Conditions: 150 mM KOAc, 10 mM MgCl2 and 150 mM bicine (pH 8.5), 24 C. An RNA of 177 nucleotides, treated with DMS and 2A3 and read out base by base. The DMS profile rests on 4,541 reads.

RNA sequence: GGGAACGACUCGAGUAGAGUCGAAAAUACGCUAAGUUCGCUUAGCGUAAAAUAUAUGGGACUAUAUAUAACCUGAUAGCCGUAGAAGAUCAUGUAUCGGCAAAAUCACCAUCUUCGGAUGGUGAAAGUUUACAAUGAACUUCGGUUCAUUGUAAACAAAAGAAACAACAACAACAAC
Reactivity to DMS in 0.01 (KOAc 150mM, MgCl2 10mM, bicine 150mM(pH8.5), 24C), signal-to-noise 4, nucleotides 027 to 126: u000a010c010g010c000u000a010a000g000u000u020c170g010c000u000u000a000g000c000g010u000a010a030a090a060u000a020u000a050u010g000g010g030a180c130u000a020u000a030u000a040u000a090a220c020c020u000g010a170u000a100g010c000c010g010u010a100g010a160a090g000a070u010c130a060u010g010u000a080u000c000g000g010c040a050a060a070a140u000c000a000c000c000a000u010c000u000u010c170g020g000a010u000g010g010u000g010a000a010a050
Reactivity to 2A3 in 0.01 (KOAc 150mM, MgCl2 10mM, bicine 150mM(pH8.5), 24C), signal-to-noise 5, nucleotides 027 to 126: u040a010c000g000c010u010a000a000g020u010u060c130g050c150u000u000a000g000c000g000u000a000a000a020a010u030a000u010a020u020g020g020g170a030c110u020a000u000a000u000a000u010a190a080c010c000u030g060a120u080a080g000c000c030g010u020a030g060a300a030g040a090u120c040a080u230g070u130a060u080c010g000g010c000a040a010a000a060u020c000a000c010c000a010u000c010u020u050c220g140g000a000u000g000g000u000g000a000a000a000